[RMDB]
RNA sequence: GGGAACGACUCGAGUAGAGUCGAAAAUUUUGAGAGAGCACAGUAUUGGGAAUUUGAGAAAGAUAAAGACCGGGAACAUGAUAAGCUCGUAGAGUUGUGCAAAAUACAAUUUGCAGCCAUUCCAUGGGCUACAUUUUCUGUUCGCAGAAAAUGUAGCAAAAGAAACAACAACAACAAC
Reactivity to DMS in 0.01 (KOAc 150mM, MgCl2 10mM, bicine 150mM(pH8.5), 24C), signal-to-noise 2, nucleotides 027 to 126: u000u000u010u000g010a210g000a100g010a070g010c030a050c060a060g030u010a070u010u000g010g000g010a090a160u010u010u010g000a120g000a050a130a060g000a070u020a040a110a090g000a150c030c020g010g020g000a030a030c030a030u000g000a100u000a090a080g000c030u000c100g010u000a090g010a080g000u000u000g040u000g000c010a010a030a100a120u000a060c300a050a130u000u000u000g010c030a040g000c050c030a110u010u000c020c020a070u000g000g000